[RMDB]
RNA sequence: GGGAACGACUCGAGUAGAGUCGAAAAAGGUGUCUCAUAGCACGCUUUAAUACAUCUACAGUAAUGAUGGGAGCAGAAAGUAGAUUAGUGAUGCAAGGUGACUCACUCCUUCUAUACCAACGAUCAAUCCGUCUCAGAUAUUCGUAUCUGAGACGGAAAAAGAAACAACAACAACAAC
Reactivity to DMS in 0.01 (KOAc 150mM, MgCl2 10mM, bicine 150mM(pH8.5), 24C), signal-to-noise 2, nucleotides 027 to 126: a040g000g020u030g020u000c060u050c070a010u010a140g000c010a030c040g050c030u000u000u000a120a070u010a120c230a030u000c010u000a040c030a070g000u010a070a080u000g020a090u010g010g000g040a040g000c030a100g000a090a080a030g020u000a010g000a040u010u000a050g010u000g000a100u020g000c050a140a110g000g010u000g010a080c010u000c050a040c040u000c030c030u000u000c080u000a080u020a130c040c100a060a110c290g010a070u010c210a140a220
Reactivity to 2A3 in 0.01 (KOAc 150mM, MgCl2 10mM, bicine 150mM(pH8.5), 24C), signal-to-noise 1, nucleotides 027 to 126: a020g050g000u040g010u030c030u020c040a050u100a000g000c000a000c040g050c040u050u090u070a120a050u070a060c000a030u000c020u040a020c010a060g140u180a170a000u070g060a030u010g040g120g050a130g080c020a010g060a040a130a020g030u010a000g000a030u010u000a040g040u040g100a160u020g050c040a040a060g110g000u000g030a020c010u000c050a030c020u020c000c020u000u010c030u080a130u060a050c010c000a070a060c010g100a100u060c000a090a030